The data come from the RNA Mapping Database (RMDB), library M2RFPK. Chemical mapping of a 207-nucleotide RNA with 2A3 and DMS. The 2A3 profile rests on 2,909 reads. Reactivities are given for positions 27 through 156. For DMS, 3,018 sequencing reads were counted.

RNA sequence: GGGAACGACUCGAGUAGAGUCGAAAAAGGUGAUUUCUCCUGCACCUUUAUCAAUGGAGGAACUCGACUUUGCUGUUGGUCCCAAAGGGACCUUAGGUGCAGACAGUUACCGGCGGUGAAGUGUGAGCAUAGGUUCGUGUCUUCGGACACGAACCAAUCAAGUUAAACUCUUCGGAGUUUAACUUGAAAAAGAAACAACAACAACAAC
Reactivity to 2A3 in 0.01 (KOAc 150mM, MgCl2 10mM, bicine 150mM(pH8.5), 24C), signal-to-noise 4, nucleotides 027 to 156: a010g000g010u000g000a000u000u030u050c000u020c020c020u130g080c020a010c010c010u110u260u120a040u010c050a020a070u300g020g000a000g010g020a030a030c010u010c010g000a000c010u000u000u040g010c010u010g010u100u060g010g000u000c040c000c040a160a100a080g020g010g010a020c030c030u020u130a020g000g000u000g000c010a030g150a300c030a030g050u080u150a010c000c010g020g000c010g000g050u050g010a010a000g020u080g070u080g120a010g010c070a070u130a160g000g010u000u000c010g000u010g010u000c010u010u060c160g060g000a000c010a000c000g000a000a000c000c000a000a010
Reactivity to DMS in 0.01 (KOAc 150mM, MgCl2 10mM, bicine 150mM(pH8.5), 24C), signal-to-noise 2, nucleotides 027 to 156: a040g040g030u000g000a300u010u000u010c050u000c030c050u000g000c040a030c010c020u010u020u000a060u000c220a110a130u000g010g000a050g040g000a070a090c040u010c020g010a060c050u000u000u020g010c000u000g040u000u010g040g000u000c000c000c020a090a110a230g050g020g020a050c000c000u000u000a020g070g010u000g040c030a160g020a110c070a140g020u000u000a050c010c000g000g010c050g000g000u000g020a020a040g010u000g020u000g000a070g040c040a110u000a130g000g040u000u000c000g070u010g010u000c000u000u010c300g040g010a020c000a030c010g000a000a000c010c020a000a040